[RMDB]
RNA sequence: GGGAACGACUCGAGUAGAGUCGAAAAACUAUAACAUCUAAAGCACCAGAACGAAUUAGCAUGUCGGCAAUCUCUAAUGCUUGUUCACCAUUAUCUGGCUGAGAAACAAUAAGAGAAUCUGUGUCAACAUAUCGUCCGAUUUCGAUCGGACGAUAUGAAAAGAAACAACAACAACAAC
Reactivity to DMS in 0.01 (KOAc 150mM, MgCl2 10mM, bicine 150mM(pH8.5), 24C), signal-to-noise 3, nucleotides 027 to 126: a110c070u010a130u020a070a110c090a070u000c050u030a060a080a080g010c030a060c040c060a050g020a120a060c080g010a080a060u000u010a060g020c080a030u010g010u010c090g020g010c110a060a040u000c040u000c040u000a140a070u000g010c060u010u020g010u000u010c030a080c070c010a050u000u010a060u010c250u040g000g020c150u000g010a030g000a060a040a030c070a040a030u000a070a060g000a030g000a050a100u010c060u000g010u000g030u010c010a090a110
Reactivity to 2A3 in 0.01 (KOAc 150mM, MgCl2 10mM, bicine 150mM(pH8.5), 24C), signal-to-noise 2, nucleotides 027 to 126: a000c130u120a080u110a270a020c010a050u030c060u100a150a040a040g040c010a050c030c000a040g030a050a010c030g030a070a020u040u020a040g070c060a040u100g040u090c020g030g060c040a060a080u010c020u010c010u090a030a030u040g020c000u030u030g040u090u040c020a030c060c000a050u040u080a120u200c060u030g030g000c070u060g040a040g080a010a060a010c070a030a070u120a130a030g010a000g010a010a040u030c080u080g090u040g050u080c000a010a040
The record gives the reactivity of an RNA of 177 nucleotides to DMS and 2A3.
The DMS profile rests on 1,663 reads.
Conditions: 150 mM KOAc, 10 mM MgCl2 and 150 mM bicine (pH 8.5), 24 C.
Values cover nucleotides 27 to 126.
Reactivities are rounded to 0.1 and cut off at 0 and 3.